[RMDB]
Chemical mapping of a 207-nucleotide RNA with 2A3 and DMS. The DMS profile rests on 5,741 reads. The 2A3 profile rests on 1,939 reads. The reactions ran in a buffer of 150 mM KOAc, 10 mM MgCl2 and 150 mM bicine (pH 8.5), at 24 C.
RNA sequence: GGGAACGACUCGAGUAGAGUCGAAAAUCAUUGAGAUGCUGGGCGCUAUGGUCGUCCUCCUCCGGCUGACCUCCUUCUCAGCUGCUGACCGGCGCCGCACAGGCGGCAUCUCAGCUUCGUGUGCAGAAAAAGAAUGGUCGGUUCGCCGACCAUUCAAGUGAAGUAGGUAGUUCGCUACCUACUUCACAAAAGAAACAACAACAACAAC
Reactivity to 2A3 in 0.01 (KOAc 150mM, MgCl2 10mM, bicine 150mM(pH8.5), 24C), signal-to-noise 3, nucleotides 027 to 156: u160c050a050u030u120g010a000g000a000u020g030c010u050g020g020g010c010g000c030u060a140u300g040g000u030c010g050u060c020c100u040c010c010u050c040c040g020g000c000u010g000a040c020c050u140c040c060u260u090c040u030c060a010g000c020u020g000c060u090g000a010c000c010g000g020c010g000c010c000g030c030a010c010a010g190g000c000g000g020c020a000u000c000u010c000a000g020c000u120u120c090g110u060g020u040g050c120a060g120a100a070a020a040a000g000a000a010u010g020g000u010c020g020g040u050u020c170g030c100c000g000a000c000c000a000u000u010c010a000a000
Reactivity to DMS in 0.01 (KOAc 150mM, MgCl2 10mM, bicine 150mM(pH8.5), 24C), signal-to-noise 2, nucleotides 027 to 156: u010c070a140u010u000g010a000g000a010u000g000c000u000g000g020g000c000g000c010u000a040u000g070g010u000c010g000u000c060c050u000c010c020u000c020c030g020g010c010u000g000a050c070c070u000c130c120u010u000c060u000c020a030g010c010u000g000c050u000g000a020c020c020g000g000c000g020c000c000g030c050a100c110a090g020g040c030g020g020c010a010u010c010u000c020a030g000c070u010u000c100g010u010g020u000g000c030a120g010a050a110a140a130a240g010a030a020u000g010g030u000c000g040g030u000u020c300g030c010c000g010a010c000c000a000u000u000c010a060a160